The record gives the reactivity of an RNA of 177 nucleotides to DMS and 2A3. Reactivities are given for positions 27 through 126. Conditions: 150 mM KOAc, 10 mM MgCl2 and 150 mM bicine (pH 8.5), 24 C.

RNA sequence: GGGAACGACUCGAGUAGAGUCGAAAAUCAUUGGCUUCGCUGCGCGCUGCGUUGCCUAGGCUUCAGAUGCUUCGUACUGUUGCCAACGUUGCAAUUUCCAAACGCUAAUGCGAAAGUGUGCAAACAAAGAUAAAGACAUGUUCGCAUGUCUUUAUCUAAAAGAAACAACAACAACAAC
Reactivity to DMS in 0.01 (KOAc 150mM, MgCl2 10mM, bicine 150mM(pH8.5), 24C), signal-to-noise 9, nucleotides 027 to 126: u010c100a100u010u000g010g010c010u000u000c030g000c020u000g020c070g000c080g020c030u000g010c060g010u000u000g010c010c020u000a140g010g010c020u000u010c020a040g010a170u000g010c100u010u010c100g020u010a090c050u000g000u000u000g010c020c020a070a110c190g010u000u000g010c080a060a100u000u000u010c020c030a070a090a160c050g010c020u010a060a120u000g010c040g010a060a050a050g010u000g010u000g010c050a130a080a070c190a060a080
Reactivity to 2A3 in 0.01 (KOAc 150mM, MgCl2 10mM, bicine 150mM(pH8.5), 24C), signal-to-noise 9, nucleotides 027 to 126: u090c030a020u030u120g010g010c010u020u010c010g010c060u110g000c020g000c000g000c020u010g000c000g020u010u010g000c000c010u010a060g020g000c000u010u010c010a030g040a250u110g070c060u090u150c080g060u070a090c020u030g030u040u010g000c010c010a040a040c080g060u060u080g020c030a070a080u020u040u020c020c000a060a050a030c020g000c040u160a200a040u220g010c030g060a050a010a020g030u040g010u020g020c000a030a060a050c040a050a200